[RMDB]
RNA sequence: GGGAACGACUCGAGUAGAGUCGAAAAGAUAUGGAAGGUUAGGUUGUUCAACAGCCAUAGGAGUACGUCCUGUCGGAAACGACAGGACGUACUCCUAUGGACAUGAACCCUACUGCCUUCCUAAGUCGAUAUCCUUUUACUUCGGUAAAAGGAUAUCAAAAGAAACAACAACAACAAC
Reactivity to DMS in 0.01 (KOAc 150mM, MgCl2 10mM, bicine 150mM(pH8.5), 24C), signal-to-noise 1, nucleotides 027 to 126: g000a130u000a300u000g010g010a010a000g020g010u000u000a010g000g000u000u010g030u010u010c020a050a080c280a220g000c010c000a000u000a010g000g010a080g000u010a020c000g000u000c000c000u020g000u000c000g030g020a100a080a230c020g030a010c000a000g000g010a010c010g000u000a000c010u000c010c010u000a000u010g010g010a030c090a100u010g020a000a010c020c010c000u020a020c300u000g020c020c000u000u000c000c030u000a010a130g020u000c100